[RMDB]
Chemical mapping of a 170-nucleotide RNA with 2A3 and DMS. For DMS, 33,680 sequencing reads were counted. The RNA was probed in 150 mM KOAc, 10 mM MgCl2 and 150 mM bicine (pH 8.5) at 24 C. High DMS reactivity at an A or C suggests that its Watson-Crick edge is free. 2A3 adducts were read by reverse transcription with SuperScript II with manganese.
RNA sequence: GGGAACGACUCGAGUAGAGUCGAAAACGUCUGAUGGACAACCUGGCGGUGAUGCUAUUAGUUUGAGUUUUAAUAACCUUUUAGGGUUUGAUUCUAGUAAACCAGUCACUAAGAAAUACACUUACUCGCACCUUGAACUUCGGUUCAAGGAAAAGAAACAACAACAACAAC
Reactivity to 2A3 in 0.01 (KOAc 150mM, MgCl2 10mM, bicine 150mM(pH8.5), 24C), signal-to-noise 9, nucleotides 027 to 129: c030g020u000c030u100g110a110u120g050g020a030c020a040a070c030c010u020g020g000c040g020g000u010g030a040u100g000c040u040a050u080u040a070g080u010u030u100g090a070g020u020u050u040u030a140a130u150a030a020c020c000u050u160u090u290a140g050g000g000u020u010u030g020a040u050u000c020u020a030g010u080a060a030a050c020c010a020g030u040c010a010c080u030a070a030g090a050a100a000u140a030c070a010c070u070u080a050c020u050c060g040c020a030
Reactivity to DMS in 0.01 (KOAc 150mM, MgCl2 10mM, bicine 150mM(pH8.5), 24C), signal-to-noise 9, nucleotides 027 to 129: c100g030u050c000u010g030a040u070g040g020a100c030a100a050c010c000u030g030g030c030g020g040u000g000a030u040g060c040u000a090u020u010a040g000u060u070u000g050a110g060u090u010u030u020a060a080u030a040a040c030c030u020u060u040u090a080g020g030g060u020u010u050g010a130u030u020c080u010a060g030u040a050a060a080c070c070a060g030u040c110a000c040u040a040a040g020a000a040a020u010a070c090a050c090u000u000a040c050u000c040g010c110a140